[RMDB]
RNA sequence: GGGAACGACUCGAGUAGAGUCGAAAAGCCACAUAUCCCGUGACAUUGCGAAAGCAAGGCUGGCGGUAGGUAGUCCUGGGCGGCGACAGCCUUGGACUGCGGCGUAAAGGUGUACCUGGGGCUGUUAUAACGCGGUAACAGUUCGCUGUUACCGCAACACACGAUAAAGCUUCGGCUUUAUCGUGUGAAAAGAAACAACAACAACAAC
Reactivity to DMS in 0.01 (KOAc 150mM, MgCl2 10mM, bicine 150mM(pH8.5), 24C), signal-to-noise 1, nucleotides 027 to 156: g010c030c040a050c050a120u000a120u000c010c030c020g030u000g000a120c030a180u020u000g000c000g040a120a090a220g010c030a040a050g030g030c020u000g020g030c050g000g010u000a020g020g010u000a010g000u010c010c010u010g000g020g020c000g000g080c070g040a130c090a170g000c010c040u000u000g020g050a060c010u010g010c000g020g000c010g040u000a090a090a090g010g020u000g000u000a070c010c060u010g060g040g020g030c030u000g000u000u010a120u000a050a110c120g030c000g050g030u000a010a020c000a020g000u000u010c240g010c020u000g000u000u000a030c000c000g030c000a020a020
Reactivity to 2A3 in 0.01 (KOAc 150mM, MgCl2 10mM, bicine 150mM(pH8.5), 24C), signal-to-noise 2, nucleotides 027 to 156: g020c000c000a020c030a020u060a040u080c000c000c000g020u030g040a080c100a170u060u060g010c040g140a080a020a020g050c050a060a010g090g000c030u040g030g000c010g000g040u090a070g050g040u010a010g030u000c010c020u030g000g030g030c010g020g020c070g060a020c030a020g000c000c000u000u020g010g010a010c020u010g000c010g000g030c000g020u050a050a070a020g010g030u030g020u060a090c030c020u040g010g000g020g000c040u000g060u130u080a190u050a100a080c140g000c010g000g000u000a000a000c000a000g000u030u040c160g000c060u000g010u000u000a000c010c000g020c030a000a000
Structure probing data (DMS and 2A3) for a 207-nucleotide construct. The RNA was probed in 150 mM KOAc, 10 mM MgCl2 and 150 mM bicine (pH 8.5) at 24 C. DMS adducts were read by reverse transcription with MarathonRT.